[RMDB]
RNA sequence: GGGAACGACUCGAGUAGAGUCGAAAAGUGGAAGCUCGUAGCGAUUCUGACGUGCAAAUCGAUCGUCAAACUUGGGUAUAGGGGCGAAAGACUAAUCGAACCAUCUAGUAGCUGGUUCCCUCCGAAAUUCCUCUCAACUAUUCGUAGUUGAGAGGAAAAAAGAAACAACAACAACAAC
Reactivity to 2A3 in 0.01 (KOAc 150mM, MgCl2 10mM, bicine 150mM(pH8.5), 24C), signal-to-noise 3, nucleotides 027 to 126: g040u050g040g080a100a040g070c010u010c000g060u060a000g030c020g080a080u060u110c060u090g060a030c010g030u060g040c010a040a060a080u050c050g030a050u060c000g070u010c030a020a040a220c040u080u060g010g020g020u090a120u090a180g040g010g030g000c000g030a020a010a010g010a020c060u100a010a130u110c040g040a020a010c020c000a040u030c010u000a020g040u050a020g080c030u040g060g000u020u010c020c000c020u070c020c020g010a080a040a000
Reactivity to DMS in 0.01 (KOAc 150mM, MgCl2 10mM, bicine 150mM(pH8.5), 24C), signal-to-noise 4, nucleotides 027 to 126: g040u020g000g010a120a110g010c070u010c030g000u030a150g000c060g000a060u010u020c090u000g020a070c030g020u010g000c150a060a100a110u010c110g010a120u020c020g000u020c040a030a090a070c090u000u000g000g000g000u020a080u010a050g020g020g000g010c020g000a040a040a110g000a060c100u010a080a140u020c090g010a040a040c030c050a050u020c020u000a090g010u020a100g020c070u000g000g000u010u000c000c010c010u010c030c020g010a090a040a160
Structure probing data (2A3 and DMS) for a 177-nucleotide construct. DMS (dimethyl sulfate) methylates the pairing face of unpaired adenines and cytosines. For 2A3 the reverse transcriptase was SuperScript II with manganese. Values are in units of 0.01, from 0 to 300, in steps of 10. The RNA was probed in 150 mM KOAc, 10 mM MgCl2 and 150 mM bicine (pH 8.5) at 24 C.